An RNA of 177 nucleotides, treated with DMS and 2A3 and read out base by base. Source: RMDB library M2PK50, as collected in RNAgym. The reactions ran in a buffer of 150 mM KOAc, 10 mM MgCl2 and 150 mM bicine (pH 8.5), at 24 C. DMS adducts were read by reverse transcription with MarathonRT. The 2A3 profile rests on 2,787 reads.

RNA sequence: GGGAACGACUCGAGUAGAGUCGAAAAGGUCGGAGCUUCGGCUCCGACCAAAGGAGGAUUACCAAAUCCCAGCAAGCAGCAGCAGCAAGCAAGCAGCAAGCAAAACCAUUACGUUCGCGUAAUGGAAGUACUUAUGUUCCUUCGGGAACAUAAGUACAAAAGAAACAACAACAACAAC
Reactivity to DMS in 0.01 (KOAc 150mM, MgCl2 10mM, bicine 150mM(pH8.5), 24C), signal-to-noise 2, nucleotides 027 to 126: g000g000u010c000g020g000a000g020c000u010u020c190g030g000c000u000c000c000g000a010c010c010a010a010a090g010g030a070g020g020a120u000u000a080c140c060a110a080a120u000c020c000c000a110g010c120a070a110g000c020a000g010c040a060g010c020a030g000c040a030a080g000c090a020a050g020c030a100g000c100a070a090g000c080a090a070a090a190c020c000a010u000u000a000c010g010u000u010c250g030c000g050u000a000a000u000g000g020a000a070
Reactivity to 2A3 in 0.01 (KOAc 150mM, MgCl2 10mM, bicine 150mM(pH8.5), 24C), signal-to-noise 2, nucleotides 027 to 126: g040g020u020c010g000g060a000g000c060u120u110c300g090g030c000u030c020c000g020a000c000c000a010a010a000g010g020a080g030g030a060u040u090a110c020c000a000a000a080u000c010c000c000a010g040c020a020a050g010c010a000g010c000a000g000c000a000g010c010a060a030g020c020a060a000g000c010a020g000c000a030a030g000c000a010a040a030a130c010c000a000u000u000a000c010g020u010u070c300g000c010g120u000a000a000u000g000g010a020a010